[RMDB]
RNA sequence: GGGAACGACUCGAGUAGAGUCGAAAAAAAAAAUAGAUCGUUCUAUUAACGAUCUCGCGCCGGUCGUCGGUGGUCGGCGAGCCCACGGACGAACUUACUCGCGCGUAAGUUAAUAAAUCGCCAAAAAGGAAUUAUGAUGAUUCGUCAUCAUAAUUCCAAAAGAAACAACAACAACAAC
Reactivity to DMS in 0.01 (KOAc 150mM, MgCl2 10mM, bicine 150mM(pH8.5), 24C), signal-to-noise 2, nucleotides 027 to 126: a020a020a060a070a040a080u010a020g010a010u000c000g020u000u000c300u010a120u000u000a040a010c000g000a010u000c000u010c030g020c020g020c000c140g010g020u000c010g010u010c010g010g030u000g000g000u010c040g010g010c000g000a010g000c140c000c000a010c030g000g000a020c020g000a040a040c080u010u010a090c140u010c210g020c060g010c050g010u010a050a050g010u020u000a060a060u010a020a010a030u000c020g010c000c020a060a060a030a060a140
Reactivity to 2A3 in 0.01 (KOAc 150mM, MgCl2 10mM, bicine 150mM(pH8.5), 24C), signal-to-noise 1, nucleotides 027 to 126: a000a000a000a000a000a000u090a000g000a010u000c000g000u060u000c090u150a300u300u200a050a010c010g000a010u000c010u010c010g020c020g010c030c100g040g040u000c010g000u000c060g160g020u020g000g020u020c060g000g000c010g000a000g000c000c000c000a010c020g020g000a000c000g030a110a000c030u090u110a090c050u160c190g000c010g000c000g030u020a040a050g010u020u030a020a000u050a070a040a030u010c020g000c000c030a010a060a010a030a000